[RMDB]
RNA sequence: GGGAACGACUCGAGUAGAGUCGAAAAGCGCCUCGGCCAGCCUGAUGGACAAUAGCUGGCGUUGGUAGUUCCAGUCGUAGAGCGCCUCGUUGGCCGUCAGCCCUUCAUAGCAUUGCAGCCGGAUCAGAAUUGGACUUUAGUUCGCUAAAGUCCAAUUAAAAGAAACAACAACAACAAC
Reactivity to 2A3 in 0.01 (KOAc 150mM, MgCl2 10mM, bicine 150mM(pH8.5), 24C), signal-to-noise 7, nucleotides 027 to 126: g050c030g040c010c010u030c020g080g010c020c000a020g020c020c030u100g050a090u130g040g040a040c080a080a060u080a090g040c080u020g020g000c010g030u030u040g050g040u040a150g040u090u120c040c020a050g070u110c050g070u130a030g010a020g120c020g020c000c000u030c040g040u030u070g020g020c010c000g010u010c010a020g010c010c000c000u080u100c050a110u090a080g050c040a070u020u160g010c010a010g000c010c000g020g020a040u070c020a030g080
Reactivity to DMS in 0.01 (KOAc 150mM, MgCl2 10mM, bicine 150mM(pH8.5), 24C), signal-to-noise 6, nucleotides 027 to 126: g010c080g010c030c020u000c090g000g010c000c010a070g000c040c070u000g010a060u010g010g020a080c120a090a060u000a100g010c040u000g010g000c040g010u010u010g010g000u010a090g010u010u020c020c020a080g010u020c060g020u030a090g010a110g000c070g000c020c000u010c060g010u020u010g000g010c020c020g010u000c050a080g000c030c020c030u000u020c070a080u020a090g000c060a070u010u020g010c040a100g010c040c020g000g000a090u020c080a100g000